Chemical mapping of a 207-nucleotide RNA with 2A3. The data come from the RNA Mapping Database (RMDB), library OK3TST. The RNA was probed in 150 mM KOAc, 10 mM MgCl2 and 150 mM bicine (pH 8.5) at 24 C.
RNA sequence: GGGAACGACUCGAGUAGAGUCGAAAAGGCGAUCCGCAGUCCGACCAGUUCGUCAUCACCGCGCCGGCCGACCUCGAUGUCGCGCUGCUGUACAAGACCCGGUCGCCGAGUGAUGCCAUCGACCUAGUCGUCUACGACAUGCACUACGGCGACGCCGCCGCAUGAGUCAUUUCGAUGACUCAUGCGGAAAAGAAACAACAACAACAAC
Reactivity to 2A3 in 0.01 (KOAc 150mM, MgCl2 10mM, bicine 150mM(pH8.5), 24C), signal-to-noise 2, nucleotides 027 to 156: g010g030c050g060a100u000c000c000g060c090a020g030u080c020c040g050a030c010c030a000g000u040u080c000g080u020c020a090u050c060a030c080c020g080c080g000c020c090g020g040c040c060g010a070c000c030u080c160g110a130u130g000u010c020g020c030g010c130u030g010c070u060g040u030a050c020a120a070g020a170c000c000c000g080g010u040c080g000c030c020g010a000g010u000g000a000u010g080c030c000a120u170c060g040a050c000c050u080a180g080u140c080g030u040c040u120a070c130g080a030c020a100u190g130c040a030c010u280a110c030g010g000c000g030a000c000g000c000c000g040